This 177-nucleotide RNA was probed chemically with 2A3 and DMS. It was measured as part of the RMDB libraries RFM100 and RFMREP. DMS adducts were read by reverse transcription with MarathonRT.

RNA sequence: GGGAACGACUCGAGUAGAGUCGAAAAUGUGUGCGCCGUGUGCGGAUAGCUUGCUAUGCGUGUGUGGUUGUGUGUGGAUUGAUGUGGGUUUUAACUUGUUGCCGUUCGGGACGUUGACGAAAUGGAGUACUCAGUCUAAUUUCGAUUAGACUGAGUAAAAAGAAACAACAACAACAAC
Reactivity to 2A3 in 0.01 (KOAc 150mM, MgCl2 10mM, bicine 150mM(pH8.5), 24C), signal-to-noise 9, nucleotides 027 to 126: u140g030u010g010u020g020c030g020c010c010g060u060g020u040g050c020g030g020a030u030a030g020c040u030u120g010c010u030a020u090g090c030g020u040g010u010g020u020g020g020u070u070g040u020g010u010g010u040g070g020a090u030u120g040a060u070g030u060g030g020g030u030u030u030u110a060a060c030u030u060g040u060u040g030c010c010g040u050u050c020g020g010g030a040c030g030u020u050g030a030c030g030a010a040a120u120g010g020a030g030
Reactivity to DMS in 0.01 (KOAc 150mM, MgCl2 10mM, bicine 150mM(pH8.5), 24C), signal-to-noise 8, nucleotides 027 to 126: u010g020u010g020u000g010c070g030c040c030g010u010g020u010g020c030g010g000a060u010a050g010c040u010u010g010c030u000a040u010g010c040g020u010g020u010g020u010g000g010u000u010g020u000g010u010g010u010g000g000a100u010u010g010a070u010g010u000g010g010g000u000u010u010u020a060a110c120u000u000g010u010u000g010c040c020g010u000u000c050g000g000g000a070c070g010u000u010g010a090c090g000a050a060a090u010g010g000a130g010